Structure probing data (2A3 and DMS) for a 177-nucleotide construct.
RNA sequence: GGGAACGACUCGAGUAGAGUCGAAAAAGAGGAGGUAAAGUCACACAAAUUGGGACUGAACUGCACCCCAAAGCUGUGUCAGGACUCAUAGGUGCCUUUGCUGGUUAUGGUCUUAGAUUGAGGGAACCGGGUAGAUCUGUUUCGACAGAUCUACCCGAAAAGAAACAACAACAACAAC
Reactivity to 2A3 in 0.01 (KOAc 150mM, MgCl2 10mM, bicine 150mM(pH8.5), 24C), signal-to-noise 1, nucleotides 027 to 126: a000g100a030g070g020a020g010g000u010a010a000a030g010u020c000a030c000a000c000a070a140a300u140u020g000g000g000a000c010u040g000a030a000c020u020g010c000a030c030c080c000c000a070a110a000g000c020u000g060u060g070u000c010a000g060g000a260c040u000c050a020u050a040g000g030u020g000c000c000u050u040u020g030c020u030g020g040u090u040a090u110g050g010u000c010u060u100a120g040a250u080u130g070a040g040g000g000a020a020c020
Reactivity to DMS in 0.01 (KOAc 150mM, MgCl2 10mM, bicine 150mM(pH8.5), 24C), signal-to-noise 2, nucleotides 027 to 126: a060g030a100g010g030a130g010g000u000a030a040a020g000u000c040a050c020a140c090a060a070a160u000u000g010g000g010a300c010u000g020a040a030c030u000g010c030a030c220c000c020c030a050a020a120g000c030u000g010u000g010u000c010a020g000g010a100c010u000c020a030u000a080g000g000u000g000c060c020u000u000u000g010c020u000g000g000u000u010a050u020g000g010u010c030u010u000a080g010a160u010u000g010a130g020g000g000a050a090c190

The data come from the RNA Mapping Database (RMDB), library OK2TRN. The reactions ran in a buffer of 150 mM KOAc, 10 mM MgCl2 and 150 mM bicine (pH 8.5), at 24 C. For DMS, 1,639 sequencing reads were counted.